[RMDB]
RNA sequence: GGGAACGACUCGAGUAGAGUCGAAAAUUUACACUUAUCUUCCUCAAUGUUCUAGGUAUUGGAGAAAGUCUUCACCUUCCAAUUACUCCAGUGAUGAGGGGCAUAACUUACUGGAUUGGAUCCUAAACACUAGUUUUAGCUUCGGCUAAAACUAGUGAAAAGAAACAACAACAACAAC
Reactivity to 2A3 in 0.01 (KOAc 150mM, MgCl2 10mM, bicine 150mM(pH8.5), 24C), signal-to-noise 1, nucleotides 027 to 126: u050u040u100a030c040a010c020u120u070a030u120c030u080u080c000c000u070c080a060a090u100g030u200u010c000u050a030g010g010u040a050u060u050g020g000a030g060a080a150a080g060u040c070u110u120c080a040c020c040u040u000c010c000a000a050u060u050a080c040u020c000c030a050g000u020g050a050u040g010a000g010g000g000g000c000a030u030a050a040c030u040u070a030c040u030g000g030a050u040u040g060g030a040u040c000c000u000a050a070a000
Reactivity to DMS in 0.01 (KOAc 150mM, MgCl2 10mM, bicine 150mM(pH8.5), 24C), signal-to-noise 3, nucleotides 027 to 126: u000u000u020a140c100a060c210u000u000a030u000c040u000u010c020c000u020c040a040a100u010g020u010u000c050u000a050g020g010u000a040u000u000g020g010a020g010a060a100a120g010u010c170u000u000c120a100c090c040u000u020c020c010a080a040u020u010a050c070u000c020c050a000g050u010g000a040u010g010a060g030g010g020g000c140a030u000a020a050c060u010u010a090c130u010g000g010a080u000u000g020g020a190u000c010c020u000a060a030a140